This 177-nucleotide RNA was probed chemically with DMS. Source: RMDB library TTRDES, as collected in RNAgym. Conditions: 150 mM KOAc, 10 mM MgCl2 and 150 mM bicine (pH 8.5), 24 C. Reactivities are given for positions 27 through 126.

RNA sequence: GGGAACGACUCGAGUAGAGUCGAAAAGAUAUGGAACUCAUUGCAUGUCGUUGAAACGCAUUCGGAAACGAAUGCGUGGAGACAUGAUGAGGUUCCUAAGUCAAAUCGGCGGGUUCGCCCGCCGAAAGGUUAUGAUCAAGUUCGCUUGAUCAUAACCAAAAGAAACAACAACAACAAC
Reactivity to DMS in 0.01 (KOAc 150mM, MgCl2 10mM, bicine 150mM(pH8.5), 24C), signal-to-noise 3, nucleotides 027 to 126: g010a010u000a170u010g000g000a010a030c000u000c050a080u000u010g030c070a010u000g010u000c000g010u000u010g000a190a200a020c000g010c000a020u000u000c010g010g010a030a020a120c000g010a020a000u000g000c000g000u010g000g020a040g000a010c000a010u000g000a060u000g000a070g020g000u010u000c000c000u000a020a140g010u000c010a080a170a170u000c020g010g010c000g020g010g020u000u000c300g000c000c000c000g040c000c010g000a000a020a060